An RNA of 177 nucleotides, treated with DMS and read out base by base.
DMS adducts were read by reverse transcription with MarathonRT.
For DMS, 761 sequencing reads were counted.
The RNA was probed in 150 mM KOAc, 10 mM MgCl2 and 150 mM bicine (pH 8.5) at 24 C.
RNA sequence: GGGAACGACUCGAGUAGAGUCGAAAAGAUAUGGACGUAACUAUAGGCAACAGCUCGGAAACGAGACAUGCCUUUAGUACGUCCUAAGUCAAAGAUACCGAAUUGCGUUCGCGCAAUUCGGUAUCAAGCAACUGCUUACGUUCGCGUAAGCAGUUGCAAAAGAAACAACAACAACAAC
Reactivity to DMS in 0.01 (KOAc 150mM, MgCl2 10mM, bicine 150mM(pH8.5), 24C), signal-to-noise 1, nucleotides 027 to 126: g030a040u020a300u010g000g000a000c000g000u000a060a040c000u000a010u000a050g010g040c000a060a070c300a270g000c000u010c000g000g000a040a110a170c010g000a000g010a000c060a170u000g010c010c000u000u000u010a010g010u000a000c010g000u010c000c000u000a000a120g000u010c020a050a080a070g010a010u000a000c000c000g000a010a000u000u000g030c000g000u000u010c300g050c060g000c010a000a000u000u000c000g000g010u000a000u000c010a000a070